Chemical mapping of a 177-nucleotide RNA with DMS and 2A3. The reactions ran in a buffer of 150 mM KOAc, 10 mM MgCl2 and 150 mM bicine (pH 8.5), at 24 C. The DMS profile rests on 2,619 reads. Source: RMDB library RFMREP, as collected in RNAgym.
[RMDB]
RNA sequence: GGGAACGACUCGAGUAGAGUCGAAAAGUGAUUGACAGAGCUUUGAGAGUUUUACUGGCCGUCAAAUUUGGUUCUCGACCCGCUGUCACCAAUUACGCUGCUUUUUCCUUUUUAUUAACUCCUAUACCCUUAGGACUAUGUUCGCAUAGUCCUAAGGAAAAGAAACAACAACAACAAC
Reactivity to DMS in 0.01 (KOAc 150mM, MgCl2 10mM, bicine 150mM(pH8.5), 24C), signal-to-noise 3, nucleotides 027 to 126: g010u000g010a090u010u010g020a050c060a060g010a130g010c040u000u000u010g010a060g000a100g010u010u000u010u000a100c070u000g020g000c030c030g000u000c040a040a070a130u010u020u000g020g010u000u000c010u010c020g010a070c050c040c040g030c040u000g010u000c030a050c090c060a060a100u000u010a100c090g000c050u000g000c050u000u000u000u000u000c010c000u000u010u000u000u000a060u030u000a050a110c120u010c010c030u000a120u010a150c160
Reactivity to 2A3 in 0.01 (KOAc 150mM, MgCl2 10mM, bicine 150mM(pH8.5), 24C), signal-to-noise 2, nucleotides 027 to 126: g030u050g020a140u100u080g020a010c040a030g090a030g030c020u140u110u120g040a080g000a030g040u000u050u040u180a070c010u020g010g060c030c000g030u030c030a010a050a070u170u140u150g020g000u070u020c010u040c040g060a040c000c020c010g000c030u020g000u040c000a020c030c010a040a020u080u060a050c030g010c040u030g090c000u070u020u050u030u090c020c000u080u090u090u050u000a190u160u060a050a030c020u040c010c010u080a090u050a190c010